[RMDB]
RNA sequence: GGGAACGACUCGAGUAGAGUCGAAAACAGAUCUUUCGAGAUCUGAAAAAACCUUUGUGCCUUUGUCAGCUUAUCUCGCUCGUCCCAUUGGGACGAGAACUACGAGAUUUGCUUGGAUUUAAGGCACUCUGGUAAAAAAUGCUGCUUCGGCAGCAAACAGUUUCGUACAGUUCGCUGUACGAAACUGAAAAGAAACAACAACAACAAC
Reactivity to 2A3 in 0.01 (KOAc 150mM, MgCl2 10mM, bicine 150mM(pH8.5), 24C), signal-to-noise 1, nucleotides 027 to 156: c000a000g030a000u020c030u090u260u220c210g020a040g000a010u010c000u000g040a180a000a000a000a000a030c000c040u020u000u000g000u000g000c000c010u000u010u010g020u000c000a000g030c000u000u000a000u000c000u000c000g030c040u010c010g010u020c000c000c080a300u300u300g000g000g000a000c010g000a010g020a000a030c130u300a110c000g000a000g000a040u000u000u020g000c010u030u030g070g020a040u300u300u190a020a020g000g000c000a000c000u000c000u000g010g000u050a100a000a000a000a000a100u110g000c000u000g020c000u070u090c250g120g000c010a000g000c000a000a000a000
Structure probing data (2A3) for a 207-nucleotide construct. The 2A3 profile rests on 762 reads. It was measured as part of the RMDB library RNAMAK. Conditions: 150 mM KOAc, 10 mM MgCl2 and 150 mM bicine (pH 8.5), 24 C.